[RMDB]
About this RNA:
This 177-nucleotide RNA was probed chemically with DMS and 2A3.
RNA sequence: GGGAACGACUCGAGUAGAGUCGAAAAGGGAGACCCGAGCAGAGGCAUAGCGAACUGCGCACGGUGAAGCCUUGAGGGAAAGCCGUAGGACCCGGGUUCGAUUCCCGGCAGCUCCACCGAAGGGCCACAUUAUGCCGACCUUCGGGUCGGCAUAAUGAAAAGAAACAACAACAACAAC
Reactivity to DMS in 0.01 (KOAc 150mM, MgCl2 10mM, bicine 150mM(pH8.5), 24C), signal-to-noise 2, nucleotides 027 to 126: g010g030g040a150g020a070c040c000c010g000a140g030c100a070g000a210g000g000c070a070u000a250g040c010g040a120a040c100u000g000c050g050c140a300c230g020g100u020g000a060a060g020c010c000u030u000g000a300g010g000g000a120a200a050g000c060c110g000u030a090g000g010a170c200c010c010g020g000g000u000u020c180g010a280u010u050c000c000c040g000g000c090a100g010c030u040c140c000a130c010c000g010a240a010g020g000g010c050c140a180
Reactivity to 2A3 in 0.01 (KOAc 150mM, MgCl2 10mM, bicine 150mM(pH8.5), 24C), signal-to-noise 1, nucleotides 027 to 126: g030g020g020a090g030a010c000c000c020g000a040g000c030a010g020a030g030g090c050a110u140a100g070c030g040a010a020c030u060g000c020g000c000a020c130g020g050u050g040a030a010g000c000c040u020u050g030a080g000g030g000a050a030a000g060c020c020g070u090a090g000g150a100c010c000c000g020g020g030u040u040c030g030a030u000u020c000c020c050g000g000c000a030g000c010u010c000c000a040c000c000g010a000a040g050g030g010c000c000a050
The RNA was probed in 150 mM KOAc, 10 mM MgCl2 and 150 mM bicine (pH 8.5) at 24 C. For 2A3, 915 sequencing reads were counted. For 2A3 the reverse transcriptase was SuperScript II with manganese.